[RMDB]
RNA sequence: GGGAACGACUCGAGUAGAGUCGAAAAUCUUGACAGAGCUGGCGAUAGAUCUGGUAACGCGUAGACAGGAGAUCGGCACACUGGACGAAGUGAACCAUAUCGACCGGUGACAGUAGUUGAGGUGGAAUCCCUGGUGGUCGUUCGCGACUACCAGGGAAAAAGAAACAACAACAACAAC
Reactivity to DMS in 0.01 (KOAc 150mM, MgCl2 10mM, bicine 150mM(pH8.5), 24C), signal-to-noise 3, nucleotides 027 to 126: u000c000u000u000g010a070c080a050g010a280g020c020u000g010g000c020g000a060u000a060g000a070u010c040u000g010g000u010a070a070c080g010c010g010u000a130g000a080c050a050g020g020a070g010a080u030c010g000g010c090a150c040a080c020u010g000g010a130c030g000a060a280g000u020g000a070a090c110c010a090u020a040u010c000g010a150c010c030g020g020u000g010a140c070a050g000u000a070g000u010u000g000a020g000g010u000g010g030a210a080
Reactivity to 2A3 in 0.01 (KOAc 150mM, MgCl2 10mM, bicine 150mM(pH8.5), 24C), signal-to-noise 3, nucleotides 027 to 126: u010c000u000u040g010a000c010a010g050a000g000c000u010g030g020c000g010a000u000a050g070a020u020c040u030g000g020u010a070a010c020g000c000g000u000a020g030a040c030a020g020g040a020g020a060u060c010g070g030c030a010c000a020c060u020g000g030a040c010g010a060a020g050u020g060a040a030c040c010a030u010a020u210c040g150a180c020c010g020g000u020g070a040c040a030g070u170a020g000u030u010g000a000g020g020u040g030g000a080a050
An RNA of 177 nucleotides, treated with DMS and 2A3 and read out base by base. Reactivities are given for positions 27 through 126. The 2A3 profile rests on 2,890 reads. It was measured as part of the RMDB library OK1LIB. 2A3 adducts were read by reverse transcription with SuperScript II with manganese. The RNA was probed in 150 mM KOAc, 10 mM MgCl2 and 150 mM bicine (pH 8.5) at 24 C. For DMS the reverse transcriptase was MarathonRT.